[RMDB]
RNA sequence: GGGAACGACUCGAGUAGAGUCGAAAAUCAAUGGGCUUCUCUUUGAGCGGAGGGGAUCAUAGCGUUUUGCUUGCUCAUUGAGAGCCCGGGCGUCACAGAUGAUGUAUGGAGCAGGCAGAACCUCGUGAUCAUAUGAGCGAUUCGUCGCUCAUAUGAUAAAAGAAACAACAACAACAAC
Reactivity to DMS in 0.01 (KOAc 150mM, MgCl2 10mM, bicine 150mM(pH8.5), 24C), signal-to-noise 5, nucleotides 027 to 126: u030c050a070a080u040g000g000g000c000u020u040c000u000c010u000u010u000g000a020g000c010g000g010a020g010g000g000g020a040u000c050a150u040a130g000c170g030u010u010u010u000g010c000u000u000g000c010u000c000a010u000u000g000a010g020a050g000c010c000c020g000g020g010c090g000u000c050a050c110a070g010a120u020g000a070u010g010u010a050u010g000g000a090g010c040a050g020g000c040a060g010a060a130c040c030u000c070g010u030g010
Reactivity to 2A3 in 0.01 (KOAc 150mM, MgCl2 10mM, bicine 150mM(pH8.5), 24C), signal-to-noise 7, nucleotides 027 to 126: u110c060a030a130u160g020g000g000c040u250u050c000u090c000u000u020u050g020a020g010c050g040g030a030g010g050g010g020a010u050c060a160u180a110g070c100g080u030u040u050u100g110c000u010u040g000c000u010c010a020u000u010g010a010g000a010g010c010c000c000g000g020g000c020g010u020c010a030c060a130g060a090u120g000a020u070g090u110a050u090g060g000a030g020c030a020g050g000c010a030g020a060a040c010c010u060c060g090u090g070
The record gives the reactivity of an RNA of 177 nucleotides to DMS and 2A3. 2A3 adducts were read by reverse transcription with SuperScript II with manganese. For DMS, 14,039 sequencing reads were counted. DMS adducts were read by reverse transcription with MarathonRT. For 2A3, 7,532 sequencing reads were counted.